[RMDB]
The record gives the reactivity of an RNA of 177 nucleotides to 2A3 and DMS. The DMS profile rests on 3,573 reads.
RNA sequence: GGGAACGACUCGAGUAGAGUCGAAAAGAUAUGGAGUUGCUUCCUUGGAUUUAUACAUUUCUCACUUGUAUAUUCGGAAACGAAUAUACAAGUGGAAAUGUAUUGUCAGGAGAGCAACUCCUAAGUCGUAAACAUUCUUCUUCGGAAGAAUGUUUACAAAAGAAACAACAACAACAAC
Reactivity to 2A3 in 0.01 (KOAc 150mM, MgCl2 10mM, bicine 150mM(pH8.5), 24C), signal-to-noise 3, nucleotides 027 to 126: g100a030u190a080u260g000g000a000g010u010u000g010c000u040u010c000c000u030u090g170g000a100u180u300u220a000u100a020c000a020u000u010u030c300u090c120a020c000u010u000g010u000a000u000a000u000u010c010g010g020a050a120a110c000g000a000a020u000a000u010a000c000a000a000g010u000g000g000a000a000a010u000g000u000a000u000u000g010u000c010a020g040g070a220g040a020g070c000a010a000c000u010c000c000u000a000a000g020u030c050
Reactivity to DMS in 0.01 (KOAc 150mM, MgCl2 10mM, bicine 150mM(pH8.5), 24C), signal-to-noise 2, nucleotides 027 to 126: g000a100u000a300u010g000g000a030g010u000u000g020c010u000u000c020c000u010u000g020g010a030u010u010u000a010u000a010c010a010u000u000u000c000u000c010a020c000u000u000g010u000a000u000a000u000u000c000g000g000a160a120a290c000g000a010a010u000a000u000a010c000a000a020g000u000g000g000a000a000a010u000g010u000a000u000u000g000u000c000a020g010g010a040g000a020g000c020a000a010c010u000c000c000u000a000a050g000u000c120